[RMDB]
RNA sequence: GGGAACGACUCGAGUAGAGUCGAAAACAAAUCUGCAAUCCUAAGACAAGGUUGCUAAAGCUUUCUAUAGAACAAGGGAAUCUGAAAGAAAGGCUCACAUUAAAGUGAUCCCUUCCUCACCAGGGGCGCUUAGAAGACUGUUCGCAGUCUUCUAAGCAAAAGAAACAACAACAACAAC
Reactivity to DMS in 0.01 (KOAc 150mM, MgCl2 10mM, bicine 150mM(pH8.5), 24C), signal-to-noise 2, nucleotides 027 to 126: c060a080a140a130u000c090u000g010c060a030a030u000c000c060u040a190a130g000a100c240a020a100g010g000u010u000g030c030u000a060a090a130g000c060u000u000u000c020u030a170u000a070g040a060a120c160a080a100g000g010g000a090a150u000c030u010g010a080a080a060g000a040a040a020g010g010c290u000c030a040c050a150u000u000a060a060a070g010u040g010a050u000c010c020c020u000u000c020c050u000c030a030c120c130a030g000g000g020g000c290
Reactivity to 2A3 in 0.01 (KOAc 150mM, MgCl2 10mM, bicine 150mM(pH8.5), 24C), signal-to-noise 2, nucleotides 027 to 126: c020a000a080a040u060c020u060g030c030a000a110u090c000c000u160a140a060g120a180c090a060a030g010g000u000u000g000c000u020a030a080a000g020c030u020u090u000c070u010a110u070a090g110a170a040c060a110a040g050g000g020a010a090u010c050u030g030a040a090a050g000a000a070a010g030g000c010u030c040a020c000a030u190u240a180a070a030g020u030g040a070u030c000c000c010u050u010c010c020u040c000a030c050c010a010g010g000g050g050c060